[RMDB]
RNA sequence: GGGAACGACUCGAGUAGAGUCGAAAAUUUCAUUGGCAUGCUGUGAAUCAGGAGAUGUGGAAAAGUAUGUUUAACCUCCAUGAACACAUUUUAUUGAUGGGUUCAAUAAAGAUUUCACCUAAAAAGAUGUUAACUACAUGUUCGCAUGUAGUUAACAAAAAGAAACAACAACAACAAC
Reactivity to 2A3 in 0.01 (KOAc 150mM, MgCl2 10mM, bicine 150mM(pH8.5), 24C), signal-to-noise 3, nucleotides 027 to 126: u010u010u040c000a010u020u060g020g040c040a000u010g000c030u020g030u060g100a090a080u060c050a000g040g050a190g030a090u040g030u130g070g030a010a000a050a090g050u070a050u120g090u050u110u080a050a050c010c000u010c040c010a040u020g000a030a010c020a000c000a010u020u040u110u290a230u170u300g010a010u030g010g000g000u030u000c040a070a070u130a080a070a000g000a010u060u100u080c050a090c050c000u120a140a050a050a020a020g070a050
Reactivity to DMS in 0.01 (KOAc 150mM, MgCl2 10mM, bicine 150mM(pH8.5), 24C), signal-to-noise 4, nucleotides 027 to 126: u000u010u000c080a110u000u010g000g010c040a030u000g010c020u000g020u000g000a190a100u010c080a060g010g010a100g020a110u010g010u010g000g000a090a060a050a090g020u010a030u000g010u000u000u000a070a090c060c020u000c030c050a220u000g000a020a010c020a010c020a010u000u000u010u020a110u050u030g010a010u000g000g010g030u000u000c010a040a080u000a050a060a050g010a080u000u000u000c090a090c030c060u000a050a060a100a110a090g020a150
Chemical mapping of a 177-nucleotide RNA with 2A3 and DMS. Conditions: 150 mM KOAc, 10 mM MgCl2 and 150 mM bicine (pH 8.5), 24 C. The 2A3 profile rests on 1,714 reads. For 2A3 the reverse transcriptase was SuperScript II with manganese. DMS adducts were read by reverse transcription with MarathonRT. For DMS, 3,728 sequencing reads were counted. Reactivities are rounded to 0.1 and cut off at 0 and 3.